[RMDB]
The record gives the reactivity of an RNA of 207 nucleotides to 2A3 and DMS. Conditions: 150 mM KOAc, 10 mM MgCl2 and 150 mM bicine (pH 8.5), 24 C. 2A3 adducts were read by reverse transcription with SuperScript II with manganese.
RNA sequence: GGGAACGACUCGAGUAGAGUCGAAAAAUCCAUUACAGAUGAAUCUAAAGCAGCUAAGUACCUGCUAAGUAACAAUUACUACAAUAUUAUCAAUGGAUACAGUAAGUUUUUUCAACACCCUGGUACUGACACUUAUAUUGACGGCGUCACAUUUGAAACGCUAAAAUGGAUUCGUCCAUUUUAGCGUAAAAGAAACAACAACAACAAC
Reactivity to 2A3 in 0.01 (KOAc 150mM, MgCl2 10mM, bicine 150mM(pH8.5), 24C), signal-to-noise 4, nucleotides 027 to 156: a000u000c000c000a000u000u030a030c000a020g050a010u040g040a050a100u030c020u030a070a010a040g000c000a000g010c010u060a100a020g060u050a070c010c010u030g040c050u080a040a020g030u050a040a050c050a150a100u140u050a050c040u050a030c040a070a110u090a110u290u140a080u140c050a080a100u120g100g000a050u050a110c040a010g030u050a070a070g050u060u010u000u010u030u180c050a070a040c010a050c060c020c040u020g020g000u020a010c000u010g020a020c010a000c010u110u040a050u050a030u180u110g040a040c030g040g020c020g040u090c070a000c010a130u120u140u190g130a240a180
Reactivity to DMS in 0.01 (KOAc 150mM, MgCl2 10mM, bicine 150mM(pH8.5), 24C), signal-to-noise 2, nucleotides 027 to 156: a170u020c030c000a070u020u000a080c050a110g000a100u000g000a160a130u000c040u000a070a090a070g000c010a020g010c010u020a090a140g010u010a050c040c000u000g020c030u000a030a120g010u010a090a100c110a060a110u000u000a110c060u000a050c050a120a120u000a070u000u000a150u000c020a090a180u000g010g020a030u010a050c070a100g000u020a020a070g040u000u000u000u000u000u000c030a090a140c070a040c080c030c030u020g040g030u000a030c020u020g010a080c030a040c030u010u020a090u000a160u000u000g010a130c090g020g040c040g040u010c020a030c040a120u010u000u000g000a210a110